[RMDB]
Structure probing data (2A3 and DMS) for a 177-nucleotide construct. For 2A3 the reverse transcriptase was SuperScript II with manganese. The RNA was probed in 150 mM KOAc, 10 mM MgCl2 and 150 mM bicine (pH 8.5) at 24 C.
RNA sequence: GGGAACGACUCGAGUAGAGUCGAAAACACCGUCAUAGGUACUUGACGAUGGUCAACGUCGGACGAGCGCCACCACGUCGCUGCCGAACGGUAUGCAUGGCGGCUACCGAUACUCCGCGGAAUAUCAUACCAAGGGAGAGUUCGCUCUCCCUUGGUAAAAAGAAACAACAACAACAAC
Reactivity to 2A3 in 0.01 (KOAc 150mM, MgCl2 10mM, bicine 150mM(pH8.5), 24C), signal-to-noise 1, nucleotides 027 to 126: c010a030c000c010g000u020c000a010u000a180g180g000u050a120c010u030u080g010a010c030g160a150u150g140g010u010c040a090a000c070g020u030c030g060g010a100c110g070a050g000c020g040c010c010a070c030c010a060c090g060u080c040g000c010u020g000c010c020g010a080a000c100g030g010u000a020u090g140c030a000u020g020g050c000g000g040c060u120a080c000c040g020a030u010a070c010u050c060c000g040c020g060g000a080a010u160a040u180c130a050
Reactivity to DMS in 0.01 (KOAc 150mM, MgCl2 10mM, bicine 150mM(pH8.5), 24C), signal-to-noise 3, nucleotides 027 to 126: c150a110c040c020g010u000c020a040u000a080g010g020u010a040c140u030u000g000a110c050g010a050u000g010g000u000c050a080a300c080g000u010c040g030g000a100c080g020a100g020c050g010c050c030a090c120c100a050c100g010u000c080g020c080u000g010c020c040g000a100a100c110g010g020u000a020u010g010c050a090u000g000g000c010g000g010c030u000a050c030c000g010a080u010a080c040u000c020c020g010c130g030g000a100a080u030a070u020c100a290